This 207-nucleotide RNA was probed chemically with DMS and 2A3. For DMS the reverse transcriptase was MarathonRT. The reactions ran in a buffer of 150 mM KOAc, 10 mM MgCl2 and 150 mM bicine (pH 8.5), at 24 C. 2A3 adducts were read by reverse transcription with SuperScript II with manganese. For 2A3, 2,339 sequencing reads were counted. It was measured as part of the RMDB library M2RFPK. For DMS, 2,504 sequencing reads were counted.

[RMDB]
RNA sequence: GGGAACGACUCGAGUAGAGUCGAAAAAAUUAGAGGCAAUUUGAAAUAAUUUAAAUUAGCUCAACCCUACUGCACUUACCGAACUAGAUAACGGUGUAGUAGGGGUAAAUUCUUCGCAUUCGGUGCGCAACCACCUGAGGUUUCGACCUCAGGUGAACUACUUAAUACGUUUCGACGUAUUAAGUAGAAAAGAAACAACAACAACAAC
Reactivity to DMS in 0.01 (KOAc 150mM, MgCl2 10mM, bicine 150mM(pH8.5), 24C), signal-to-noise 1, nucleotides 027 to 156: a070a080u000u000a110g000a110g000g010c000a040a000u020u000u040g030a080a040a240u010a140a150u000u000u000a010a010a040u000u000a120g020c030u000c000a150a030c000c000c000u000a030c000u030g000c000a010c000u000u000a010c000c010g010a100a150c240u010a130g010a160u010a070a080c150g030g040u000g020u000a010g000u000a010g010g000g000g000u010a010a050a100u000u010c080u000u000c060g030c030a240u000u000c080g020g000u000g000c030g000c100a060a100c090c010a020c020c000u010g010a030g020g010u000u000u010c280g000a030c000c000u000c000a000g010g020u000g000a020a020
Reactivity to 2A3 in 0.01 (KOAc 150mM, MgCl2 10mM, bicine 150mM(pH8.5), 24C), signal-to-noise 3, nucleotides 027 to 156: a020a000u210u120a070g010a040g050g040c000a000a020u010u060u010g060a100a070a050u220a150a220u140u060u070a020a050a020u020u030a030g000c000u010c020a000a020c000c000c000u000a000c000u010g000c000a000c000u030u060a020c050c010g050a070a080c050u040a090g090a180u160a260a090c100g030g010u000g010u010a010g000u000a000g010g010g000g000u000a000a000a000u060u010c030u080u080c010g000c000a030u030u030c030g150g000u010g000c020g010c060a060a050c070c000a010c000c000u000g000a000g000g040u040u110u160c230g070a060c000c000u000c000a000g000g010u010g000a000a000